The data come from the RNA Mapping Database (RMDB), library M2RFPK. Chemical mapping of a 207-nucleotide RNA with 2A3. The RNA was probed in 150 mM KOAc, 10 mM MgCl2 and 150 mM bicine (pH 8.5) at 24 C.

RNA sequence: GGGAACGACUCGAGUAGAGUCGAAAAAUCUUUAAGCAGAUGGCAGGUUCUCCCCGUACGGUGCGGAAGUUCGCGCUUCCGUGAAACGCGAAAAUCGGACGGUGGCUGCAAGUCGCAUCGCAAAACCUAUAGCUUGUUAGGUUCGCCUAACAAGCAACUCUAGUCCAUCGUUCGCGAUGGACUAGAGAAAAGAAACAACAACAACAAC
Reactivity to 2A3 in 0.01 (KOAc 150mM, MgCl2 10mM, bicine 150mM(pH8.5), 24C), signal-to-noise 2, nucleotides 027 to 156: a000u040c030u000u120u050a110a010g000c060a050g010a070u080g040g060c000a020g040g000u080u020c080u010c040c010c000c000g030u010a010c000g000g010u030g020c020g020g010a020a000g030u080u200c060g020c030g000c070u000u000c000c000g000u020g040a080a080a020c140g000c030g080a090a030a000a090u040c030g000g000a000c010g040g040u150g060g020c070u080g000c040a020a050g030u020c030g030c040a050u030c000g000c060a060a060a010a130c010c040u110a130u100a140g000c010u000u010g000u000u000a000g050g000u060u030c110g030c070c000u000a030a020c000a000a000g000c000a010a000